RNA sequence: GGGAACGACUCGAGUAGAGUCGAAAAACAUUUGGUUUACAUCAAUAGUAACAUGAGCGGAAGUAAACAGAACAAGAAGUACUGCGGUUAUUCAAGUUCAAAGUUCACACUAUCGCAAUAAAUUAAACAUUAUAAUUGAAUUCGUUCAAUUAUAAUGAAAAGAAACAACAACAACAAC
Reactivity to DMS in 0.01 (KOAc 150mM, MgCl2 10mM, bicine 150mM(pH8.5), 24C), signal-to-noise 4, nucleotides 027 to 126: a090c060a120u000u000u010g010g000u000u000u010a050c070a050u010c100a070a100u010a080g030u000a080a080c060a070u010g010a120g010c010g000g010a060a050g030u000a050a030a030c030a100g010a020a010c040a030a300g000a040a040g010u000a020c030u010g020c090g030g010u010u010a110u000u000c010a040a300g000u000u000c020a050a060a130g010u000u000c070a070c090a090c070u000a020u000c010g000c030a020a070u010a040a040a070u010u020a070a060a210
Reactivity to 2A3 in 0.01 (KOAc 150mM, MgCl2 10mM, bicine 150mM(pH8.5), 24C), signal-to-noise 1, nucleotides 027 to 126: a000c040a030u110u060u100g070g020u090u080u100a020c020a010u060c030a050a150u070a170g050u020a070a020c050a090u090g040a020g010c030g000g010a030a000g000u060a020a030a020c010a040g000a000a010c010a060a000g040a030a000g030u040a010c020u020g090c090g110g000u010u020a020u070u050c010a060a000g000u000u010c020a120a090a040g010u070u060c050a040c000a000c070u050a060u130c010g000c000a010a150u120a160a080a030u210u170a130a090a010

Annotation:
An RNA of 177 nucleotides, treated with DMS and 2A3 and read out base by base. High DMS reactivity at an A or C suggests that its Watson-Crick edge is free. The RNA was probed in 150 mM KOAc, 10 mM MgCl2 and 150 mM bicine (pH 8.5) at 24 C.